Structure probing data (DMS and 2A3) for a 207-nucleotide construct. For 2A3, 1,137 sequencing reads were counted. 2A3 adducts were read by reverse transcription with SuperScript II with manganese.
[RMDB]
RNA sequence: GGGAACGACUCGAGUAGAGUCGAAAAAAACUUUUGUGACUUGCUGAAACGGGACUAAUCUCCUCACCGAGGCUAAGCAAGUAAAAUACGCCUCUCAUAUCCCUACCUGAGGGUGGUAAGGAAAUAACCUGCAACGCUUCCUUCGGGAAGCGUUGAAUACUACUGUUAACUUCGGUUAACAGUAGUAAAAAGAAACAACAACAACAAC
Reactivity to DMS in 0.01 (KOAc 150mM, MgCl2 10mM, bicine 150mM(pH8.5), 24C), signal-to-noise 1, nucleotides 027 to 156: a060a070a090c070u010u000u000u000g040u010g040a080c060u010u000g010c000u010g010a140a060a080c100g040g030g010a090c040u000a140a050u000c020u000c010c000u000c030a160c100c050g020a070g040g020c020u010a130a100g000c000a000a010g020u000a040a070a080a080u000a080c100g020c010c010u000c010u000c050a080u000a210u000c010c010c000u000a090c110c060u000g000a020g040g000g010u000g020g000u010a100a030g000g030a020a130a120u000a110a080c050c030u020g000c020a000a010c010g050c040u000u000c010c020u000u010c300g010g050g010a000a000g040c010g030u010u010g000a060a120
Reactivity to 2A3 in 0.01 (KOAc 150mM, MgCl2 10mM, bicine 150mM(pH8.5), 24C), signal-to-noise 2, nucleotides 027 to 156: a000a000a010c130u180u090u040u190g090u050g080a010c000u030u000g000c000u030g030a030a150a150c040g010g010g010a000c030u060a100a090u040c030u020c020c030u060c060a090c050c040g030a000g060g000c060u070a050a000g000c000a030a010g040u080a000a060a010a000u060a000c030g010c000c000u050c010u000c010a040u010a100u210c010c010c010u000a020c010c030u000g060a060g010g010g000u010g010g000u050a070a020g040g030a000a160a160u060a050a050c030c020u050g000c010a000a000c000g000c000u000u020c030c030u040u040c190g070g000g000a000a000g010c000g000u000u000g000a000a000
It was measured as part of the RMDB library M2RFPK. The RNA was probed in 150 mM KOAc, 10 mM MgCl2 and 150 mM bicine (pH 8.5) at 24 C.